[RMDB]
RNA sequence: GGGAACGACUCGAGUAGAGUCGAAAACACCUACCUCGGCCUCACAAAGUGCUGGGAUUACAGGUGCGAGCCACUGAAACCAGCUUCCUUUUAUGGAUUAUUCUUUUGGUGUCAAGUCCAAGUACUCCCCUACAGCUACAUUCGUGUAGCUGUAGGGAAAAGAAACAACAACAACAAC
Reactivity to 2A3 in 0.01 (KOAc 150mM, MgCl2 10mM, bicine 150mM(pH8.5), 24C), signal-to-noise 7, nucleotides 027 to 126: c050a030c000c000u030a040c020c000u030c020g030g000c020c000u040c010a100c040a070a100a010g070u090g040c000u010g000g040g000a020u060u190a060c060a050g050g000u020g020c040g050a030g080c050c010a020c030u060g030a050a050a030c010c010a020g020c000u090u070c020c000u110u120u070u160a160u230g030g010a030u040u080a090u220u100c040u020u130u050u050g080g000u060g080u080c060a080a050g050u000c020c010a060a000g050u040a080c040u070c000
Reactivity to DMS in 0.01 (KOAc 150mM, MgCl2 10mM, bicine 150mM(pH8.5), 24C), signal-to-noise 2, nucleotides 027 to 126: c070a090c090c050u060a130c030c030u000c080g040g000c000c000u000c110a050c230a050a030a070g020u000g010c000u000g000g010g000a060u030u010a100c180a060g000g020u010g100c090g000a130g000c020c000a090c040u000g010a090a140a150c050c000a020g000c110u020u010c030c000u000u010u020u020a070u030g000g000a090u020u010a110u000u000c020u050u000u020u000g000g010u040g050u000c050a070a150g000u010c040c050a070a130g030u010a040c090u010c070
Source information:
Structure probing data (2A3 and DMS) for a 177-nucleotide construct.